[RMDB]
RNA sequence: GGGAACGACUCGAGUAGAGUCGAAAAGAGUAUUACAACCUCAACCUGACUAUCGUUAACGAUCAGGUCGAUCAAACCUUCCGCUUUAUGCACCUUGAUAAAGACGGUGCGAUCCGUAUGGACUGCACGUAUAGUGCUGGUUCGCCAGCACUAUACGAAAAGAAACAACAACAACAAC
Reactivity to DMS in 0.01 (KOAc 150mM, MgCl2 10mM, bicine 150mM(pH8.5), 24C), signal-to-noise 9, nucleotides 027 to 126: g010a090g010u000a080u010u010a110c190a130a110c180c020u000c020a080a040c010c010u000g010a100c160u010a110u000c080g010u010u010a120a150c100g000a040u000c040a030g000g010u000c060g010a070u000c110a060a100a090c100c030u000u010c040c020g000c020u000u000u000a030u010g010c070a100c120c080u010u000g010a070u000a030a040a050g000a110c110g010g010u000g010c040g020a020u000c000c020g020u010a050u010g020g010a040c030u000g010c050a100
Reactivity to 2A3 in 0.01 (KOAc 150mM, MgCl2 10mM, bicine 150mM(pH8.5), 24C), signal-to-noise 9, nucleotides 027 to 126: g020a010g030u080a050u210u150a070c070a070a070c030c010u010c020a020a030c000c010u010g030a050c050u090a050u120c050g100u160u210a170a130c050g010a050u030c020a010g000g060u010c030g030a050u080c040a050a060a080c010c000u060u010c020c010g050c050u050u060u050a060u150g100c050a070c050c050u090u160g040a050u120a110a080a010g090a100c040g010g010u010g010c010g010a020u000c020c020g130u210a140u280g030g010a040c030u060g010c050a020